[RMDB]
RNA sequence: GGGAACGACUCGAGUAGAGUCGAAAAACAGUUCCUACUUAUCCUGUUUUAACGCUGUUUUAUUGGCGCAAAGGUUUACGGAUAAACAACUAAUAAUUAAACCUUUUGUGUGCGAAACGUGGUUGUUAUAAUACCGAGCGUUUCGACGCUCGGUAAACUUACGCUGUAAGUUCGCUUACAGCGUAAGAAAAGAAACAACAACAACAAC
Reactivity to 2A3 in 0.01 (KOAc 150mM, MgCl2 10mM, bicine 150mM(pH8.5), 24C), signal-to-noise 2, nucleotides 027 to 156: a010c030a040g030u020u020c020c050u030a120c060u130u140a090u150c010c000u080g050u050u070u120u170a080a050c020g020c040u050g120u030u190u000u110a250u080u190g110g000c010g000c000a000a000a000g010g000u000u020u020a010c050g050g030a070u200a290a150a110c040a080a010c050u150a080a170u140a080a040u130u060a020a010a030c000c000u000u000u220u170g040u000g010u050g050c050g020a070a140a050c050g010u070g010g020u080u000g010u030u040a050u010a270a100u020a030c000c010g000a000g020c020g010u000u070u070c080g040a010c000g000c000u000c000g000g000u010a000a000a000